[RMDB]
RNA sequence: GGGAACGACUCGAGUAGAGUCGAAAACAGCGCACUCCGGGGUCGGUGAAAGUCCGAACCGGCGGUUACAGUCCGCGACCCGGUCACCUCCAGCGACCGGUUGACCAGGUGAAAUUCCUGGACCGACAAAAGGUGUCCGUCUUCGGACGGACACCAAGUAACAUUCUAAGUUCGCUUAGAAUGUUACAAAAGAAACAACAACAACAAC
Reactivity to DMS in 0.01 (KOAc 150mM, MgCl2 10mM, bicine 150mM(pH8.5), 24C), signal-to-noise 2, nucleotides 027 to 156: c040a140g000c050g040c040a110c050u000c040c030g020g010g010g030u000c040g030g020u020g000a090a090a300g000u000c020c020g030a030a200c140c010g040g000c010g010g020u010u000a180c120a100g000u000c000c010g020c020g000a280c300c010c000g010g020u000c030a020c020c020u000c220c050a140g030c000g020a040c010c000g000g000u000u000g000a060c010c000a020g010g020u000g000a090a300a120u000u010c000c000u030g010g000a060c010c000g060a070c080a060a070a060a090g000g070u010g010u000c010c010g030u000c000u000u000c300g020g020a040c000g000g050a000c000a010c000c010a000a060
Reactivity to 2A3 in 0.01 (KOAc 150mM, MgCl2 10mM, bicine 150mM(pH8.5), 24C), signal-to-noise 1, nucleotides 027 to 156: c040a010g050c050g000c060a040c070u040c040c020g040g000g000g010u020c010g020g000u010g010a030a010a000g040u020c010c010g010a060a050c030c010g000g000c000g000g000u010u000a000c010a000g000u020c000c000g000c000g010a010c000c000c000g000g020u030c040a050c030c100u230c070c060a050g040c020g080a010c000c000g000g000u000u020g000a000c000c000a000g000g010u010g000a000a000a000u000u000c000c000u000g000g000a000c000c000g010a000c030a000a110a020a020g010g000u000g000u020c010c010g010u000c000u020u020c090g120g000a000c000g010g000a000c000a000c000c000a000a010
Chemical mapping of a 207-nucleotide RNA with DMS and 2A3.
The RNA was probed in 150 mM KOAc, 10 mM MgCl2 and 150 mM bicine (pH 8.5) at 24 C.